Structure probing data (2A3 and DMS) for a 177-nucleotide construct. DMS adducts were read by reverse transcription with MarathonRT. 2A3 adducts were read by reverse transcription with SuperScript II with manganese. As a SHAPE reagent, 2A3 marks flexible, mostly unpaired nucleotides at the ribose 2'-OH.
RNA sequence: GGGAACGACUCGAGUAGAGUCGAAAAUUUAGUCUUCGAGCAUCGAAGAAGGCCAUAAAAGAGAUUGUGCAGACUGGCAUAUGCCAACAAGUGUUGGCAGUCUCUAGUCAAUUCGGAACAGAUGAACGACGCAAAAUAGUUUCGACUAUUUUGCGUCAAAAGAAACAACAACAACAAC
Reactivity to 2A3 in 0.01 (KOAc 150mM, MgCl2 10mM, bicine 150mM(pH8.5), 24C), signal-to-noise 8, nucleotides 027 to 126: u050u030u040a030g000u000c010u000u000c000g020a070g010c020a070u040c030g030a040a030g010a020a010g060g000c020c010a080u180a120a100a050a010g070a010g020a050u090u070g020u060g090c040a040g020a140c060u050g050g000c060a070u140a080u300g010c040c010a020a020c070a160a180g100u130g030u300u010g020g000c010a010g000u000c000u000c000u020a030g040u020c040a040a170u170u150c100g060g030a090a090c020a060g040a040u040g000a030a020c070
Reactivity to DMS in 0.01 (KOAc 150mM, MgCl2 10mM, bicine 150mM(pH8.5), 24C), signal-to-noise 4, nucleotides 027 to 126: u020u020u010a110g030u010c030u000u000c010g030a160g000c110a060u030c080g000a090a160g040a020a080g010g020c010c070a070u020a080a090a110a070g010a090g000a040u020u030g020u000g000c040a140g000a060c070u000g010g030c210a120u030a130u030g000c000c000a010a030c040a200a110g050u040g000u020u000g010g010c000a060g000u020c080u000c000u000a070g000u000c130a100a100u020u010c030g000g010a100a050c180a270g000a050u020g020a140a170c200